[RMDB]
RNA sequence: GGGAACGACUCGAGUAGAGUCGAAAACAGAUAAGAAAAGACCGAGAGGUUCAAGCUUAUAGGGCAGAAAGCGGGGGACAGCAGUACUAAACCUUCCCUGUGGCUGAGACGAAGGUAGUACUCCAACAAAACGAGUACUAGUUCGCUAGUACUCGAACACUAGAAGAAGGUUCGCCUUCUUCUAGUGAAAAGAAACAACAACAACAAC
Reactivity to DMS in 0.01 (KOAc 150mM, MgCl2 10mM, bicine 150mM(pH8.5), 24C), signal-to-noise 2, nucleotides 027 to 156: c050a240g020a170u000a100a100g000a080a130a150a140g010a040c000c020g000a200g020a180g030g030u000u000c020a040a140g000c000u000u010a080u000a060g000g010g000c030a130g000a090a070a040g020c010g030g020g010g030g040a070c110a070g030c020a090g050u000a050c040u000a010a060a060c010c000u010u000c010c020c050u000g000u000g010g050c050u050g000a100g010a040c020g000a020a050g040g030u010a040g020u000a060c000u000c020c030a020a120c090a040a070a070a140c000g010a010g020u030a010c010u000a030g030u010u010c300g040c020u000a020g020u000a040c000u010c010g030a010a070
Reactivity to 2A3 in 0.01 (KOAc 150mM, MgCl2 10mM, bicine 150mM(pH8.5), 24C), signal-to-noise 4, nucleotides 027 to 156: c040a010g070a090u200a200a030g030a070a140a030a020g030a000c000c070g040a030g010a030g150g010u080u070c060a040a010g000c000u030u060a020u060a150g020g020g010c050a020g070a090a060a010g060c060g000g000g010g000g000a010c010a020g060c030a020g030u020a010c000u050a030a130a120c000c010u010u040c020c010c040u060g050u090g080g010c080u070g030a010g010a060c070g020a010a000g020g000u010a010g000u000a020c010u020c040c020a050a070c030a050a160a030a030c020g000a000g000u000a000c000u000a000g000u010u010c070g000c120u000a000g000u000a000c000u010c000g000a010a000